[RMDB]
RNA sequence: GGGAACGACUCGAGUAGAGUCGAAAAAGACGGAAACCCAUCGACUGUCACCAGUUGCUGCAUCACCUGAUCACUGAUGGCUCAACGGUAUCCGGCGGUACAACUGAAUACUUGUAGCUGCCUUUUGAAAAGGAGUUCAUCUUCGGAUGAACUCCAAGCACCACUUCAUGUUCGCAUGAAGUGGUGCAAAAGAAACAACAACAACAAC
Reactivity to 2A3 in 0.01 (KOAc 150mM, MgCl2 10mM, bicine 150mM(pH8.5), 24C), signal-to-noise 1, nucleotides 027 to 156: a020g000a000c020g070g000a070a080a110c000c100c000a060u110c100g230a280c060u090g000u010c110a020c030c020a050g000u000u050g100c130u010g000c040a000u000c000a040c040c050u040g020a070u100c010a010c050u010g020a000u000g200g000c000u000c000a010a000c010g090g000u030a120u070c050c030g040g030c010g050g000u020a000c000a020a010c000u210g050a090a050u120a120c040u020u020g000u010a110g110c000u010g020c070c030u180u190u060u130g170a090a090a030a040g000g000a000g000u000u000c020a000u000c000u030u060c130g030g020a000u010g000a010a000c000u000c000c000a000a000